Structure probing data (DMS and 2A3) for a 207-nucleotide construct. For DMS the reverse transcriptase was MarathonRT. High 2A3 reactivity points to a flexible backbone, as in loops and unpaired stretches.
RNA sequence: GGGAACGACUCGAGUAGAGUCGAAAACUCGCUCAAACAUACAGAGAUGUUGUGCGAUAUGAAUCUCUCUGCAUUAGAAUGGUCGAAGAAUCAGCGGCGAUUCGAGACCCAAUUAGAAGCCGCAUUAACAGCUUUGGAACACGCCUUGCUGACGUGAAUGGAUAGGCUAUUUCGAUAGCCUAUCCAUAAAAGAAACAACAACAACAAC
Reactivity to DMS in 0.01 (KOAc 150mM, MgCl2 10mM, bicine 150mM(pH8.5), 24C), signal-to-noise 3, nucleotides 027 to 156: c040u010c020g020c070u000c040a110a140a200c080a160u000a070c010a040g000a040g000a030u010g020u000u000g030u010g010c030g020a140u000a130u000g020a070a080u000c130u010c010u000c020u000g010c020a060u010u000a100g010a160a160u010g020g020u000c020g020a210a160g010a080a050u000c060a090g040c020g030g000c030g020a060u000u000c020g000a300g010a110c000c010c060a050a080u000u010a140g020a030a140g020c030c000g000c020a160u010u000a100a100c010a020g020c020u010u000u000g020g000a110a210c030a040c000g020c000c010u010u000g010c120u010g010a040c050g010u000g000a160
Reactivity to 2A3 in 0.01 (KOAc 150mM, MgCl2 10mM, bicine 150mM(pH8.5), 24C), signal-to-noise 5, nucleotides 027 to 156: c010u010c000g000c000u030c030a110a070a040c000a020u120a060c030a060g060a010g010a060u020g000u020u040g040u020g000c010g010a020u020a090u190g140a140a110u060c040u010c000u000c030u090g060c050a130u070u160a100g110a190a110u160g000g000u020c010g000a060a020g000a020a010u010c040a060g010c000g020g000c010g010a010u000u000c000g000a010g000a000c030c000c000a040a140u200u100a070g050a210a010g010c010c010g020c000a000u090u100a060a050c010a010g030c040u110u140u290g030g030a060a030c000a000c050g030c000c000u010u030g010c020u030g000a040c040g020u020g060a030